[RMDB]
RNA sequence: GGGAACGACUCGAGUAGAGUCGAAAAGUGAACACCGCGGCAAUGCUGGAUCUGGUUGCGGCGGGCCGGAUCCCGGUGGUGUCCACGCUGGCCCCGGAUGCCGACGGCGUGGUGCACAACAUCAACGGCAUAGACCCGUUUUCGAACGGGUCUAUGCAAAAGAAACAACAACAACAAC
Reactivity to DMS in 0.01 (KOAc 150mM, MgCl2 10mM, bicine 150mM(pH8.5), 24C), signal-to-noise 1, nucleotides 027 to 126: g000u010g010a130a100c010a100c010c020g010c020g000g000c020a080a080u020g000c130u000g000g030a050u000c030u010g010g010u020u000g020c090g000g000c030g000g000g000c030c030g010g010a010u000c030c000c050g010g050u000g010g030u000g010u000c000c000a030c000g010c100u000g020g020c040c050c040c050g030g000a080u000g040c060c080g000a170c070g000g000c000g060u000g020g030u000g010c050a040c100a100a070c060a050u010c050a070a130c260g000

Overview:
An RNA of 177 nucleotides, treated with DMS and read out base by base. It was measured as part of the RMDB library OK2TST. The DMS profile rests on 991 reads.